Source information
An RNA of 177 nucleotides, treated with 2A3 and DMS and read out base by base. For DMS the reverse transcriptase was MarathonRT. The RNA was probed in 150 mM KOAc, 10 mM MgCl2 and 150 mM bicine (pH 8.5) at 24 C.
RNA sequence: GGGAACGACUCGAGUAGAGUCGAAAAAAGCAACGGGGCUAGCCGGUGGGUGUUCCGCCCCCCGAGAGGGGACGAGUGAGGCUUAUCCCGGGGAACUCGACUUAUCGUCCCCAUCUAGCGGGACCCCCUACAAUAAGAUGUUCGCAUCUUAUUGUAGAAAAGAAACAACAACAACAAC
Reactivity to 2A3 in 0.01 (KOAc 150mM, MgCl2 10mM, bicine 150mM(pH8.5), 24C), signal-to-noise 2, nucleotides 027 to 126: a010a010g050c030a030a020c040g010g030g050g000c020u060a020g040c000c050g080g030u050g010g020g030u160g030u060u030c030c010g010c020c000c000c000c010c000g030a040g010a010g060g000g000g000a010c010g000a000g040u130g020a010g040g010c030u060u050a070u100c020c020c010g000g000g000g000a080a070c020u020c060g050a040c060u150u100a060u170c010g000u000c000c000c010c010a010u030c030u040a000g020c000g030g000g010a030c010c000c000c010
Reactivity to DMS in 0.01 (KOAc 150mM, MgCl2 10mM, bicine 150mM(pH8.5), 24C), signal-to-noise 3, nucleotides 027 to 126: a100a030g000c070a100a100c070g000g000g010g020c180u000a050g020c030c040g010g020u010g010g020g020u000g020u000u000c030c010g010c010c070c030c000c000c020g020a070g010a120g010g010g000g000a010c010g000a060g000u000g000a050g000g000c060u000u000a110u000c020c010c020g010g000g020g010a100a070c060u000c030g000a120c080u000u000a150u000c000g000u000c000c000c000c000a050u000c050u000a050g010c020g000g000g010a060c010c000c010c010